Chemical mapping of a 177-nucleotide RNA with 2A3 and DMS.
For 2A3, 2,051 sequencing reads were counted.
2A3 adducts were read by reverse transcription with SuperScript II with manganese.
For DMS, 2,098 sequencing reads were counted.
DMS adducts were read by reverse transcription with MarathonRT.
Values are in units of 0.01, from 0 to 300, in steps of 10.
[RMDB]
RNA sequence: GGGAACGACUCGAGUAGAGUCGAAAACGCGUCCUGUUCGCAGGACGCGAAUUAAGGAAACCUUCCUGGUGGCGAGUAUAAAUGAGCACUCGCGCUCAUAAAAUAGGUGGGCGUUCGCGCCCACCAAAGUGGAGUUGUAAUUCGUUACAACUCCACUAAAAGAAACAACAACAACAAC
Reactivity to 2A3 in 0.01 (KOAc 150mM, MgCl2 10mM, bicine 150mM(pH8.5), 24C), signal-to-noise 2, nucleotides 027 to 126: c020g020c000g000u020c010c000u030g040u030u060c280g000c040a000g000g030a020c010g000c000g000a000a000u080u040a030a020g070g010a080a070a060c030c000u030u030c000c010u060g050g030u060g170g000c010g020a000g070u120a070u100a240a270a170u150g040a060g030c020a010c020u020c020g010c000g000c000u050c040a100u190a090a090a040a060u180a080g000g000u000g010g000g020c050g030u030u070c180g000c000g030c070c000c000a010c000c000a010a000
Reactivity to DMS in 0.01 (KOAc 150mM, MgCl2 10mM, bicine 150mM(pH8.5), 24C), signal-to-noise 2, nucleotides 027 to 126: c030g000c030g020u000c000c000u000g020u000u030c120g020c020a010g000g010a010c020g000c000g000a000a020u000u010a090a070g000g010a080a130a130c070c080u000u010c010c000u010g020g030u000g000g010c020g000a050g000u020a060u000a050a120a080u010g000a070g000c030a090c060u000c030g000c040g010c010u010c050a050u010a080a090a090a120u000a100g010g020u000g030g000g030c010g020u000u010c180g000c010g000c000c000c000a010c000c000a000a000